The record gives the reactivity of an RNA of 177 nucleotides to DMS and 2A3.
RNA sequence: GGGAACGACUCGAGUAGAGUCGAAAAGCACAUUCUGAUGACCAACGCCGAGCGCUCGCCGACCUUCUACCGUUUCGACUCGGGCGAACAGCUUGCGGUGUGGCAAGAGAUGGAAGGCGCCGGCGAGCCUAGUCGGGAGGUUCGCCUCCCGACUAGGAAAAGAAACAACAACAACAAC
Reactivity to DMS in 0.01 (KOAc 150mM, MgCl2 10mM, bicine 150mM(pH8.5), 24C), signal-to-noise 3, nucleotides 027 to 126: g020c030a080c050a090u020u000c020u010g000a120u010g000a130c020c050a060a110c080g030c040c050g010a060g050c140g040c000u000c010g010c000c000g000a300c010c000u000u000c000u000a060c070c120g010u010u000u010c010g000a040c030u020c130g010g000g000c020g020a020a030c120a260g010c030u000u000g010c010g000g000u040g010u010g000g000c000a020a030g020a120g010a110u020g010g000a020a030g000g020c110g030c140c020g020g010c000g020a000g000
Reactivity to 2A3 in 0.01 (KOAc 150mM, MgCl2 10mM, bicine 150mM(pH8.5), 24C), signal-to-noise 7, nucleotides 027 to 126: g080c030a030c020a110u140u080c090u140g100a140u120g080a090c010c030a080a060c060g020c030c010g060a080g060c030g000c020u020c000g000c010c000g290a300c010c000u000u000c000u020a070c030c030g050u010u060u150c040g030a060c050u010c040g040g150g000c010g020a050a040c050a040g050c020u030u030g000c030g070g110u140g010u080g090g000c000a030a010g030a000g010a090u140g010g010a010a000g020g000c040g030c060c010g010g010c000g000a010g000

DMS adducts were read by reverse transcription with MarathonRT. The 2A3 profile rests on 4,870 reads. The RNA was probed in 150 mM KOAc, 10 mM MgCl2 and 150 mM bicine (pH 8.5) at 24 C.